[RMDB]
About this RNA:
This 177-nucleotide RNA was probed chemically with DMS and 2A3. The DMS profile rests on 864 reads. 2A3 adducts were read by reverse transcription with SuperScript II with manganese. The 2A3 profile rests on 1,629 reads.

RNA sequence: GGGAACGACUCGAGUAGAGUCGAAAACAGGGGCUGUGGCUGCUUGUAGCCAUGGGAUCUCCAAGCGCCUGCCAGAGCAAUGGAGAGACUGGCAGCCCAGGUCAGCACAGGGCCUGCAGCGGCCACUUCCCCUUAUAAGGUUCGCCUUAUAAGGGGAAAAAGAAACAACAACAACAAC
Reactivity to DMS in 0.01 (KOAc 150mM, MgCl2 10mM, bicine 150mM(pH8.5), 24C), signal-to-noise 1, nucleotides 027 to 126: c080a120g010g010g040g030c220u000g000u000g010g010c000u000g000c030u000u010g050u000a090g000c000c020a080u010g010g000g000a160u000c000u000c000c000a030a230g000c150g000c030c020u020g030c160c110a050g000a300g010c010a140a200u000g000g020a030g000a050g000a150c060u000g000g000c040a160g010c070c190c020a030g000g000u000c020a030g000c050a140c070a070g000g010g000c160c050u010g000c110a060g010c000g000g000c020c010a020c030u010
Reactivity to 2A3 in 0.01 (KOAc 150mM, MgCl2 10mM, bicine 150mM(pH8.5), 24C), signal-to-noise 2, nucleotides 027 to 126: c050a040g000g020g020g060c030u060g030u010g030g040c000u000g000c020u080u170g080u110a020g000c000c000a020u090g040g040g080a040u000c030u000c010c000a060a040g080c030g050c080c030u180g160c070c050a110g040a020g120c000a080a090u080g000g000a020g010a010g020a050c010u010g000g040c000a030g010c000c000c010a000g000g010u040c020a040g110c060a060c030a130g050g020g020c010c020u030g000c000a000g010c000g020g000c000c000a020c000u020